[RMDB]
RNA sequence: GGGAACGACUCGAGUAGAGUCGAAAAUUUCAAUAUUGUAAAACUUCUCAUUUACUUUGUGUCUUUAUGAUCUCAUCGUUCUGGUGGACCAUAAUCAGACGCACGGUAUACUUCGUUUCUGUUGGAGAUAGAUUGAUUGAUUCGUCAAUCAAUCUAUAAAAGAAACAACAACAACAAC
Reactivity to DMS in 0.01 (KOAc 150mM, MgCl2 10mM, bicine 150mM(pH8.5), 24C), signal-to-noise 6, nucleotides 027 to 126: u000u000u010c060a050a090u010a080u010u000g000u010a070a070a100a100c120u000u000c010u010c020a140u000u010u010a020c000u000u000u000g010u000g010u000c010u000u000u000a000u000g000a030u000c000u030c020a010u000c010g020u020u010c150u030g040g030u000g000g000a030c030c000a000u000a010a010u020c220a020g000a010c000g020c000a010c040g000g000u000a010u000a070c220u010u010c110g010u000u000u010c020u000g010u000u000g010g010a080g000
Reactivity to 2A3 in 0.01 (KOAc 150mM, MgCl2 10mM, bicine 150mM(pH8.5), 24C), signal-to-noise 9, nucleotides 027 to 126: u040u050u050c030a060a060u130a130u190u210g100u190a050a050a090a110c050u070u020c010u010c020a070u080u090u020a000c000u030u010u000g010u000g000u000c010u000u020u000a000u010g030a020u000c190u050c080a010u010c020g240u300u110c170u300g020g000u000g000g000a000c000c000a000u000a010a030u100c100a010g000a000c000g000c000a000c010g010g020u010a020u020a050c050u050u140c070g030u020u020u000c020u030g110u060u050g050g020a090g010